Notes
Chemical mapping of a 177-nucleotide RNA with DMS. DMS adducts were read by reverse transcription with MarathonRT.

RNA sequence: GGGAACGACUCGAGUAGAGUCGAAAAGCGUUUAUGAGCUACAUGAACGAAGAGCAUACUUAGUCAAAGUAUGCAGAACCCUUCUGUAGCUCAGAGGGGAGGACUAAUCUUUGACUAAGAUUAGGGACUACGCCAUAGCUUUCGAGCUAUGGCGUAGAAAAGAAACAACAACAACAAC
Reactivity to DMS in 0.01 (KOAc 150mM, MgCl2 10mM, bicine 150mM(pH8.5), 24C), signal-to-noise 2, nucleotides 027 to 126: g000c120g000u010u000u010a030u010g000a040g010c040u010a020c000a030u020g000a010a010c090g010a000a080g000a300g000c010a010u000a020c000u000u010a090g000u020c300a050a030a010g010u000a010u000g000c020a040g010a150a080c120c010c030u000u000c000u010g000u000a020g010c030u010c010a040g010a050g000g010g000g020a050g010g020a180c020u010a040a000u000c010u000u000u010g030a100c280u000a060a040g000a000u000u000a050g020g000g000a140